[RMDB]
RNA sequence: GGGAACGACUCGAGUAGAGUCGAAAAGGCGGUUGAAAUACAUUCCUGUGCCGGCAAUACAGUGUGUAUGGAGGUCUCAAUGGCUCGGAAGUGCCAGCAAACCGGCGUAGAUAUUAGCAGACGUAUGAUAGGAUGCAUCCGUUCGCGGAUGCAUCAACCGUACCAUAUAGUUCGCUAUAUGGUACGGAAAAGAAACAACAACAACAAC
Reactivity to 2A3 in 0.01 (KOAc 150mM, MgCl2 10mM, bicine 150mM(pH8.5), 24C), signal-to-noise 3, nucleotides 027 to 156: g040g000c070g000g030u050u080g060a070a010a020u140a080c030a030u060u020c010c040u060g040u050g020c000c010g010g000c020a020a050u090a050c030a050g080u070g010u000g010u170a020u070g040g000a020g050g060u000c030u030c110a110a130u040g020g000c030u010c090g030g040a070a080g020u040g050c000c020a010g050c110a060a050a020c010c010g020g000c000g010u020a020g040a090u070a080u170u100a060g040c040a010g040a080c070g080u080a030u150g060a070u080a110g170g000a000u000g000c000a000u020c000c000g020u010u030c120g030c010g080g000a000u000g000c000a000u010c000a000a000
Reactivity to DMS in 0.01 (KOAc 150mM, MgCl2 10mM, bicine 150mM(pH8.5), 24C), signal-to-noise 1, nucleotides 027 to 156: g030g000c040g010g000u000u010g000a050a020a100u010a090c060a100u000u020c300c000u010g030u010g000c000c030g000g000c000a040a090u000a100c030a090g000u000g040u010g050u000a040u000g030g010a200g040g030u010c090u000c030a060a120u000g000g050c030u000c030g030g030a120a190g000u000g010c070c000a040g000c010a090a070a120c020c020g000g010c060g000u020a070g000a110u000a020u000u000a150g020c070a080g000a110c050g010u000a020u000g000a140u000a140g050g010a020u000g010c020a000u000c010c000g050u010u010c290g070c010g010g000a010u010g000c000a000u000c000a010a020
An RNA of 207 nucleotides, treated with 2A3 and DMS and read out base by base. For 2A3, 1,444 sequencing reads were counted. In probing experiments dimethyl sulfate is read out at A N1 and C N3, which are open when not base-paired. Conditions: 150 mM KOAc, 10 mM MgCl2 and 150 mM bicine (pH 8.5), 24 C. It was measured as part of the RMDB library M2RFPK.